Chemical mapping of a 177-nucleotide RNA with 2A3 and DMS.
DMS adducts were read by reverse transcription with MarathonRT.
Conditions: 150 mM KOAc, 10 mM MgCl2 and 150 mM bicine (pH 8.5), 24 C.
[RMDB]
RNA sequence: GGGAACGACUCGAGUAGAGUCGAAAAUGAAUCAUCUACUAAACCUUUACCAGUUAAAUGUAUGACUUGGUAUUGGUGUAAUAAUGCUUCUAGGUUUUCACGAAUAGCAUCAUUUAAUUUUUUACUGAAUCUGAACAUGUUUCGACAUGUUCAGAUUAAAAGAAACAACAACAACAAC
Reactivity to 2A3 in 0.01 (KOAc 150mM, MgCl2 10mM, bicine 150mM(pH8.5), 24C), signal-to-noise 9, nucleotides 027 to 126: u120g020a020a030u050c010a020u030c060u080a040c010u050a100a080a030c010c000u010u000u000a000c000c000a000g000u010u050a120a270a220u280g130u250a180u190g040a020c040u180u210g000g000u000a000u000u010g000g000u000g000u010a010a020u040a030a000u020g010c020u020u000c040u050a060g140g050u050u040u030u140c100a090c060g080a090a080u080a100g020c030a030u040c010a030u070u100u150a140a170u070u100u040u030u060u060a110c060u060g060
Reactivity to DMS in 0.01 (KOAc 150mM, MgCl2 10mM, bicine 150mM(pH8.5), 24C), signal-to-noise 6, nucleotides 027 to 126: u020g000a040a020u010c020a010u000c120u000a030c050u000a060a160a010c010c000u000u000u000a000c000c010a040g010u010u000a030a100a170u050g020u030a100u020g000a010c010u010u020g030g010u000a010u000u000g010g000u000g000u020a090a110u010a040a050u000g000c080u010u000c010u010a150g000g000u000u000u000u000c040a070c100g000a080a070u010a070g010c070a040u010c070a060u010u010u020a050a010u010u000u020u020u020u010a080c120u010g000

The data come from the RNA Mapping Database (RMDB), libraries RFM100 and RFMREP.